[RMDB]
RNA sequence: GGGAACGACUCGAGUAGAGUCGAAAAGUCAUAAAUCUGAGCAUGCGCUUGUGGUCUAUUUACAUCCAUAUAUUUUGUAUUCAUCUCCUCCAAUGAGGCAUUGGUUCAUUUGCGUGUACUGUAGAUCGCAUUAGCAUGAUUUCGAUCAUGCUAAUGCAAAAGAAACAACAACAACAAC
Reactivity to DMS in 0.01 (KOAc 150mM, MgCl2 10mM, bicine 150mM(pH8.5), 24C), signal-to-noise 3, nucleotides 027 to 126: g000u010c080a090u030a050a060a100u010c070u040g000a110g020c050a040u020g000c040g000c080u020u010g040u010g010g000u000c050u000a040u040u030u000a080c060a050u010c130c060a040u040a080u030a080u040u020u060u000g010u010a090u010u000c050a030u000c060u030c010c000u000c000c080a060a130u000g010a040g000g000c220a060u000u010g040g030u000u000c020a080u020u000u000g000c180g010u000g000u010a040c090u010g000u000a050g010a050u010c140
Reactivity to 2A3 in 0.01 (KOAc 150mM, MgCl2 10mM, bicine 150mM(pH8.5), 24C), signal-to-noise 9, nucleotides 027 to 126: g100u050c020a030u120a140a120a050u050c050u050g020a010g010c030a060u090g020c050g010c020u030u030g040u060g050g020u020c020u060a120u050u090u040a050c050a050u030c050c030a040u070a040u020a120u170u140u090u090g100u040a120u030u100c040a080u020c040u010c020c010u000c010c030a070a100u190g010a030g040g020c030a040u040u120g040g000u060u050c040a050u030u030u090g040c030g010u030g010u020a060c050u050g030u100a020g020a100u090c050
This 177-nucleotide RNA was probed chemically with DMS and 2A3. 2A3 adducts were read by reverse transcription with SuperScript II with manganese. The DMS profile rests on 5,385 reads. The RNA was probed in 150 mM KOAc, 10 mM MgCl2 and 150 mM bicine (pH 8.5) at 24 C.